[RMDB]
RNA sequence: GGGAACGACUCGAGUAGAGUCGAAAAGAAUUGGUAUGUAAGCUACUUCUUCCAGUAGCUGCGGCAUAACAUCAAGGUUAUGCAUACUGAGCCGAAGCUCAGCUUCGGUCCUCCAAGGAAGACCAAAUACAGCUCAGCCCGUUCGCGGGCUGAGCAAUCUAACACGUACGUUCGCGUACGUGUUAGAAAAAGAAACAACAACAACAAC
Reactivity to 2A3 in 0.01 (KOAc 150mM, MgCl2 10mM, bicine 150mM(pH8.5), 24C), signal-to-noise 3, nucleotides 027 to 156: g100a040a080u060u040g000g010u030a030u060g000u070a080a080g000c000u000a000c010u060u090c000u000u000c030c000a000g000u000a000g000c000u000g000c020g030g030c000a000u000a000a000c010a030u250c210a160a040g300g000u000u000a000u000g000c000a000u030a010c030u030g010a000g000c000c010g010a000a000g020c030u060c300a050g000c010u010u000c010g000g000u000c000c020u070c050c040a040a080g000g000a020a000g000a000c030c070a030a080a040u170a140c080a030g000c010u000c000a000g000c000c020c010g050u080u090c200g000c030g100g000g000c010u000g010a000g000c000a000a000
Reactivity to DMS in 0.01 (KOAc 150mM, MgCl2 10mM, bicine 150mM(pH8.5), 24C), signal-to-noise 1, nucleotides 027 to 156: g010a060a150u000u010g000g020u000a050u000g020u010a100a120g020c000u010a010c010u010u000c050u000u010c100c110a200g000u010a010g080c000u000g020c070g050g000c010a020u010a000a020c000a300u000c270a150a180g050g000u000u010a010u000g020c000a110u000a020c010u000g000a150g000c000c010g060a060a070g000c010u020c070a070g050c000u000u000c020g050g020u000c000c010u000c060c080a120a150g030g000a050a100g000a160c030c040a060a130a130u000a050c100a140g020c000u000c000a000g000c000c000c010g060u000u000c300g010c000g100g000g000c010u030g000a030g010c000a000a000
This 207-nucleotide RNA was probed chemically with 2A3 and DMS.
The RNA was probed in 150 mM KOAc, 10 mM MgCl2 and 150 mM bicine (pH 8.5) at 24 C.
For 2A3 the reverse transcriptase was SuperScript II with manganese.
The data come from the RNA Mapping Database (RMDB), library M2RFPK.
Values are in units of 0.01, from 0 to 300, in steps of 10.